[RMDB]
RNA sequence: GGGAACGACUCGAGUAGAGUCGAAAAUCACGUGAGUAGUGACAUCUGUCGUAGCUUUGCACAAUACGAGGCUGUCAUAGUUCUCUUGCAAGGAACUUUCAACAGGUCACUGCUCGUGCUGUGUGAAGAUAGUUAUGUCAUUCGUGACGUAACUAUCAAAAGAAACAACAACAACAAC
Reactivity to 2A3 in 0.01 (KOAc 150mM, MgCl2 10mM, bicine 150mM(pH8.5), 24C), signal-to-noise 9, nucleotides 027 to 126: u100c000a000c020g050u050g020a000g000u000a000g000u000g000a000c000a120u070c020u010g010u010c020g020u020a010g010c010u020u000u010g010c020a050c040a130a150u170a180c150g000a000g010g000c010u030g120u290c070a070u110a120g020u300u140c010u000c000u020u040g000c010a010a010g020g020a120a210c020u060u220u060c030a020a000c000a000g000g000u000c000a000c000u000g000c000u000c000g000u010g000c030u060g010u010g030u030g060a050a030
Reactivity to DMS in 0.01 (KOAc 150mM, MgCl2 10mM, bicine 150mM(pH8.5), 24C), signal-to-noise 9, nucleotides 027 to 126: u020c010a060c040g010u030g010a010g020u000a010g010u000g000a010c010a080u040c010u000g010u010c060g020u000a040g000c010u000u000u000g000c010a070c300a110a100u040a120c240g000a010g000g000c000u000g010u040c230a110u050a020g010u000u030c000u000c000u010u010g010c030a010a020g010g010a040a070c060u010u020u000c060a040a010c010a010g010g000u000c000a000c010u000g000c000u000c000g010u010g010c120u000g000u000g010u010g010a110a090
Chemical mapping of a 177-nucleotide RNA with 2A3 and DMS. Conditions: 150 mM KOAc, 10 mM MgCl2 and 150 mM bicine (pH 8.5), 24 C. It was measured as part of the RMDB library OK1LIB. Values are in units of 0.01, from 0 to 300, in steps of 10. For DMS the reverse transcriptase was MarathonRT.